Structure probing data (DMS) for a 177-nucleotide construct.

RNA sequence: GGGAACGACUCGAGUAGAGUCGAAAAGAUAUGGACGUUAUCUCGUAUUCGCACGCUUGGACCGUGGUCAGAGUCGGAAACGACUCUGAGCCACGCUAGCGUGGAAUACGAGAUAACGUCCUAAGUCGAUACGCAUUAGCUUCGGCUAAUGCGUAUCAAAAGAAACAACAACAACAAC
Reactivity to DMS in 0.01 (KOAc 150mM, MgCl2 10mM, bicine 150mM(pH8.5), 24C), signal-to-noise 1, nucleotides 027 to 126: g010a120u010a300u000g010g010a030c000g020u010u000a000u010c000u000c050g040u020a040u010u000c000g000c000a000c000g000c000u010u000g060g010a210c300c020g050u000g000g000u010c000a010g000a000g000u010c000g000g000a170a120a190c000g020a010c020u000c000u000g020a080g010c000c010a010c030g000c030u000a010g020c000g030u000g010g000a010a010u010a010c020g000a000g000a000u000a000a000c010g000u000c000c000u000a000a030g020u020c140
Background:
The data come from the RNA Mapping Database (RMDB), library TTRINS. The DMS profile rests on 1,915 reads. Reactivities are given for positions 27 through 126. The RNA was probed in 150 mM KOAc, 10 mM MgCl2 and 150 mM bicine (pH 8.5) at 24 C.